[RMDB]
An RNA of 177 nucleotides, treated with 2A3 and DMS and read out base by base.
The RNA was probed in 150 mM KOAc, 10 mM MgCl2 and 150 mM bicine (pH 8.5) at 24 C.
Reactivities are given for positions 27 through 126.
RNA sequence: GGGAACGACUCGAGUAGAGUCGAAAAAAGAUAUGGACUUAGACAUGCCUGUAAGUGGGACGAAGAACAAAGCUCGGAAACGAGCUUUGGGAGUCCCAUUGAGGGCAACAGCUAAGUCCUAAGUCAAGCCUUCAAUAUAGUUCGCUAUAUUGAAGGCAAAAGAAACAACAACAACAAC
Reactivity to 2A3 in 0.01 (KOAc 150mM, MgCl2 10mM, bicine 150mM(pH8.5), 24C), signal-to-noise 2, nucleotides 027 to 126: a010a010g070a030u110a060u150g000g000a000c000u010u010a000g040a050c040a110u090g000c020c030u140g160u280a030a030g020u000g030g000g010a010c020g210a300a110g030a080a000c000a000a010a000g000c000u010c000g040g000a060a020a030c010g040a000g000c000u000u000u000g000g010g000a000g020u000c000c020c000a000u010u010g000a010g000g000g020c000a000a000c010a010g010c000u010a000a000g000u020c000c000u000a100a000g050u030c030a010a110
Reactivity to DMS in 0.01 (KOAc 150mM, MgCl2 10mM, bicine 150mM(pH8.5), 24C), signal-to-noise 5, nucleotides 027 to 126: a100a070g010a040u000a300u000g000g000a010c000u000u000a000g020a090c080a300u000g010c010c000u000g010u030a190a100g030u000g000g000g000a030c000g000a130a180g000a190a200c010a000a000a010g000c000u000c010g010g000a110a100a150c000g020a010g010c000u000u000u000g000g000g000a120g010u000c000c000c000a010u000u000g000a250g010g000g000c010a010a020c280a070g020c010u010a010a020g010u000c000c000u010a010a060g010u000c030a130a170